Chemical mapping of a 207-nucleotide RNA with 2A3 and DMS. Values are in units of 0.01, from 0 to 300, in steps of 10. For DMS the reverse transcriptase was MarathonRT.
RNA sequence: GGGAACGACUCGAGUAGAGUCGAAAAAUAUGCUAUUGGCAAUCAUUCAGAGCUUGAAUAUGUAUUUAAUGAGUAUCUAAUGGCUAAGUAUCCAGAUGUUAAGCUAAACAAUCAUAAUAGAUGGAGAAUGGCUUAUAAGGUAGGACCUAUAGGAGUGAUGAAUGGAAAUCUUCGGAUUUCCAUUCAUAAAAGAAACAACAACAACAAC
Reactivity to 2A3 in 0.01 (KOAc 150mM, MgCl2 10mM, bicine 150mM(pH8.5), 24C), signal-to-noise 2, nucleotides 027 to 156: a000u120a060u090g010c000u010a020u110u020g050g000c020a030a090u030c010a030u100u110c070a010g060a040g130c060u150u150g030a060a040u200a080u180g070u030a130u040u120u020a110a040u030g000a000g030u050a030u040c020u030a120a000u010g000g000c010u030a000a080g040u050a100u060c030c050a010g010a060u090g010u100u030a060a000g000c020u030a010a030a130c030a080a030u090c000a000u050a250a010u050a220g060a060u060g020g010a010g020a110a020u030g010g000c000u050u030a090u030a110a030g040g000u020a000g000g040a030c000c000u010a030u050a090g010g030a040g040u060g020
Reactivity to DMS in 0.01 (KOAc 150mM, MgCl2 10mM, bicine 150mM(pH8.5), 24C), signal-to-noise 2, nucleotides 027 to 156: a100u000a050u060g010c030u000a050u020u020g010g010c030a080a070u000c030a050u000u000c060a130g000a270g000c020u010u000g040a100a110u000a100u020g040u010a070u020u000u000a040a080u000g000a120g040u000a050u010c050u000a040a060u000g000g000c020u010a050a130g050u000a070u000c050c050a090g010a160u000g030u020u000a040a040g020c060u000a050a110a090c090a090a080u010c040a120u000a060a120u020a120g020a120u010g010g000a100g010a090a090u000g030g000c020u000u010a030u000a060a080g010g020u000a070g020g000a090c020c030u000a120u000a020g010g020a080g030u000g010